[RMDB]
RNA sequence: GGGAACGACUCGAGUAGAGUCGAAAACAGAGUUCAAAACACCAACGCCUUGCGGAACAGAAUAGAUGAAAGGCGGCAGCCCUGGUGUGACGACGGCACCUACGCAGAUUUCAACAGAUGGACUUCGGGCGAACUGUGGCAGCCUCGGGGCACCGCCUCUUUACUAAGCUUUCGAGCUUAGUAAAGAAAAAGAAACAACAACAACAAC
Reactivity to DMS in 0.01 (KOAc 150mM, MgCl2 10mM, bicine 150mM(pH8.5), 24C), signal-to-noise 2, nucleotides 027 to 156: c040a140g020a130g030u010u010c050a080a060a110a150c040a070c020c000a090a100c030g010c030c030u000u000g020c010g050g030a100a300c080a070g000a090a080u010a110g000a180u010g010a080a070a200g020g040c030g000g030c030a110g010c010c010c030u000g020g030u010g000u000g030a210c030g010a070c010g030g000c010a090c010c020u010a130c000g030c000a100g020a090u000u000u000c020a090a210c040a180g000a130u000g020g010a040c090u020u000c030g040g000g020c060g000a070a080c030u010g000u010g010g070c030a190g000c030c020u030c050g000g000g060g080c020a300c030c020g050c020c010
Reactivity to 2A3 in 0.01 (KOAc 150mM, MgCl2 10mM, bicine 150mM(pH8.5), 24C), signal-to-noise 3, nucleotides 027 to 156: c030a010g070a010g100u120u110c040a040a060a140a060c050a030c030c020a080a030c070g030c030c070u050u170g050c050g090g040a060a020c040a060g170a160a070u170a070g090a090u200g090a150a060a000g000g000c000g010g000c050a020g000c040c000c000u030g070g030u040g030u020g040a030c060g010a000c030g020g000c010a040c020c030u070a050c040g000c000a030g060a130u030u100u060c050a120a120c040a120g090a180u130g040g050a040c040u100u060c080g060g070g000c030g010a040a020c020u030g010u040g100g030c010a010g040c020c010u010c040g040g010g000g000c000a010c000c000g010c000c000
Annotation:
Chemical mapping of a 207-nucleotide RNA with DMS and 2A3. For 2A3, 1,641 sequencing reads were counted. In probing experiments dimethyl sulfate is read out at A N1 and C N3, which are open when not base-paired. The DMS profile rests on 2,346 reads. Conditions: 150 mM KOAc, 10 mM MgCl2 and 150 mM bicine (pH 8.5), 24 C. Source: RMDB library OK3TST, as collected in RNAgym. For DMS the reverse transcriptase was MarathonRT.